[RMDB]
RNA sequence: GGGAACGACUCGAGUAGAGUCGAAAAUGCUGCAUUUGUCUCAGAUGUUUUCGCUGCGGCUGCCGAUGCGGCUGCCGCCUUUUCCGACGCUGCCGCCGCAGUGGCUGACGCACCUGCAUCACCGGCAUUUAACGCUAUCUUUCGAGAUAGCGUUAAAAAAAGAAACAACAACAACAAC
Reactivity to 2A3 in 0.01 (KOAc 150mM, MgCl2 10mM, bicine 150mM(pH8.5), 24C), signal-to-noise 7, nucleotides 027 to 126: u040g010c020u010g000c020a150u040u070u150g050u010c010u000c050a030g020a050u030g070u040u090u090u180c100g010c070u020g000c000g020g000c010u010g000c000c000g030a060u050g010c010g010g000c000u000g010c010c010g010c000c000u090u100u060u060c040c040g050a070c050g000c020u010g000c000c010g000c000c010g000c000a020g030u040g060g000c000u010g010a010c010g000c000a020c000c010u030g000c010a010u020c020a020c030c010g020g000c000a010
Reactivity to DMS in 0.01 (KOAc 150mM, MgCl2 10mM, bicine 150mM(pH8.5), 24C), signal-to-noise 6, nucleotides 027 to 126: u010g000c010u010g010c050a110u010u010u010g010u010c030u000c040a160g000a040u000g010u000u010u020u010c180g000c200u000g030c010g000g000c000u000g010c000c030g010a100u010g010c020g010g020c010u000g000c010c060g010c010c050u000u000u020u030c160c120g000a070c190g010c050u000g010c000c090g000c020c010g010c010a010g010u020g000g000c010u010g000a030c030g010c010a030c060c050u000g000c020a030u000c030a080c130c040g010g000c040a060